[RMDB]
RNA sequence: GGGAACGACUCGAGUAGAGUCGAAAAUCGUGAGAUGUGGUGCCUCACGCGCUCGAGGCGUCCGUGGUCAGAGAGACCACUGACGCAAAAACUCGAGCGCAAAUAAAUGGCAUUACAUCUAGAAUAAGCAUUAAAUACUAUUCGUAGUAUUUAAUGCAAAAGAAACAACAACAACAAC
Reactivity to 2A3 in 0.01 (KOAc 150mM, MgCl2 10mM, bicine 150mM(pH8.5), 24C), signal-to-noise 6, nucleotides 027 to 126: u140c060g020u110g170a020g000a000u000g000u000g010g010u000g000c000c000u080c030a090c130g000c000g000c000u000c000g000a000g020g000c000g000u000c010c000g000u000g000g000u000c050a040g120a070g020a020g000a300c000c000a000c000u000g000a000c000g000c000a060a090a030a040a030c000u000c000g000a000g000c000g000c000a000a000a000u090a000a070a040u080g000g000c000a000u000u000a000c000a000u000c000u000a000g020a020a170u300a120a020
Reactivity to DMS in 0.01 (KOAc 150mM, MgCl2 10mM, bicine 150mM(pH8.5), 24C), signal-to-noise 4, nucleotides 027 to 126: u020c080g020u040g010a040g010a010u010g000u000g000g010u020g010c010c000u010c300a160c220g010c000g000c000u000c000g000a000g000g010c000g000u000c000c080g000u000g010g010u010c000a170g010a150g010a180g000a020c000c000a000c000u000g010a020c000g030c030a020a030a040a080a300c000u000c000g000a020g020c000g000c000a000a040a080u020a080a070a050u010g000g010c000a000u000u010a000c000a000u000c010u000a020g000a110a080u020a110a150

Chemical mapping of a 177-nucleotide RNA with 2A3 and DMS. For DMS the reverse transcriptase was MarathonRT.